RNA sequence: GGGAACGACUCGAGUAGAGUCGAAAAGAGUAGUAGUUCGCUACUACUCAAAGGCACAAAAGGCACAGUUCUAAAGUGCAUGGAACACGGCAAGUGCCCGUGAAAGUAAAUCCUUCGGGAUUUACAAGUUUACUAACAUAUUCGUAUGUUAGUAAACAAAAGAAACAACAACAACAAC
Reactivity to 2A3 in 0.01 (KOAc 150mM, MgCl2 10mM, bicine 150mM(pH8.5), 24C), signal-to-noise 9, nucleotides 027 to 126: g010a000g000u010a000g000u000a000g000u020u050c180g020c090u000a000c000u000a000c000u000c000a010a020a000g030g000c020a020c010a020a260a020a050g020g010c030a030c070a240g050u150u030c050u160a130a110a050g020u030g000c010a010u070g060g010a090a030c020a000c050g010g000c050a180a180g100u040g130c000c010c010g030u050g080a100a020a000g000u000a000a010a010u000c010c000u020u050c230g080g000g000a000u000u000u000a000c000a000a010
Reactivity to DMS in 0.01 (KOAc 150mM, MgCl2 10mM, bicine 150mM(pH8.5), 24C), signal-to-noise 9, nucleotides 027 to 126: g000a020g010u000a010g010u000a010g010u000u020c260g040c000u000a010c000u000a000c000u000c000a030a080a080g010g010c020a010c020a030a090a130a100g000g000c010a070c060a120g010u000u010c160u010a060a100a120g010u000g000c040a050u010g000g000a060a080c090a030c050g000g010c040a170a140g010u000g000c040c000c030g010u000g000a090a080a120g000u000a000a010a010u000c000c000u000u010c210g030g010g000a010u000u000u000a000c000a050a100
Chemical mapping of a 177-nucleotide RNA with 2A3 and DMS. For 2A3 the reverse transcriptase was SuperScript II with manganese.